[RMDB]
RNA sequence: GGGAACGACUCGAGUAGAGUCGAAAACGCAUCGGGAGCGAUAGCGGUGAAUUAUUCGUGGUUUUAUCGAUUCGGCAUAGUGGCGAUAACUGAAUGUCGGAUCGGUACUGCGGGUGUUUAAACGCACAUCUUCAACCCAGUUCGCUGGGUUGAAGAUAAAAGAAACAACAACAACAAC
Reactivity to DMS in 0.01 (KOAc 150mM, MgCl2 10mM, bicine 150mM(pH8.5), 24C), signal-to-noise 2, nucleotides 027 to 126: c030g010c060a070u010c090g000g000g020a080g000c060g040a070u000a100g060c010g000g000u050g020a000a040u020u050a020u020u010c010g000u010g000g000u010u060u030u010a020u000c000g020a020u000u000c000g000g000c000a020u000a000g050u080g010g020c230g000a080u050a120a040c000u010g030a100a020u000g000u010c000g000g000a000u000c000g030g030u000a010c030u000g010c020g010g010g020u000g000u010u000u000a050a130a110c060g000c030a060c250
Reactivity to 2A3 in 0.01 (KOAc 150mM, MgCl2 10mM, bicine 150mM(pH8.5), 24C), signal-to-noise 6, nucleotides 027 to 126: c040g000c000a030u060c050g020g060g070a080g110c040g030a030u050a040g000c010g000g040u050g070a030a030u220u190a020u050u070c010g010u010g000g040u050u050u120u130a010u010c000g000a000u000u010c000g000g000c010a000u010a050g090u060g080g070c140g140a130u190a180a070c010u070g110a160a030u000g000u000c000g000g000a000u000c000g000g000u000a000c000u000g000c000g000g010g000u000g020u010u040u040a150a150a030c020g000c010a020c020

An RNA of 177 nucleotides, treated with DMS and 2A3 and read out base by base. DMS adducts were read by reverse transcription with MarathonRT. Values cover nucleotides 27 to 126. It was measured as part of the RMDB libraries RFM100 and RFMREP. The reactions ran in a buffer of 150 mM KOAc, 10 mM MgCl2 and 150 mM bicine (pH 8.5), at 24 C.